RNA sequence: GGGAACGACUCGAGUAGAGUCGAAAAGGGAGGGCCUUACCAGGGUCGGGACCUCCCCUACGUACACUCGGGCCCUCUUCUUCGGGCUCCGGGCGGGUCAGGGCCACUAAGGGCUGGGUGGGAGAGGGAUCUUCGAUAUAUUCGUAUAUCGAAGAUCAAAAGAAACAACAACAACAAC
Reactivity to DMS in 0.01 (KOAc 150mM, MgCl2 10mM, bicine 150mM(pH8.5), 24C), signal-to-noise 4, nucleotides 027 to 126: g020g020g000a050g000g010g010c030c020u000u000a070c070c130a150g020g020g010u000c120g010g000g000a090c020c010u010c010c000c000c000u000a040c110g010u000a140c150a100c030u000c020g000g020g010c000c000c010u000c160u010u020c140u000u010c160g020g000g010c040u000c030c050g000g000g040c120g000g020g000u010c140a070g010g000g000c060c030a080c160u020a070a120g000g000g020c090u000g020g010g010u010g000g000g010a240g010a060g000g000
Reactivity to 2A3 in 0.01 (KOAc 150mM, MgCl2 10mM, bicine 150mM(pH8.5), 24C), signal-to-noise 4, nucleotides 027 to 126: g020g010g020a060g010g020g030c010c020u040u060a030c040c060a120g280g080g040u040c000g010g010g010a040c010c000u030c000c000c000c000u040a040c040g080u060a020c040a010c040u020c000g020g000g000c020c050c020u010c040u240u010c000u090u100c020g030g000g000c020u000c030c000g000g000g050c080g010g010g020u080c070a060g000g050g000c050c020a060c080u140a070a100g100g020g040c100u070g030g060g120u220g020g010g020a090g030a040g040g090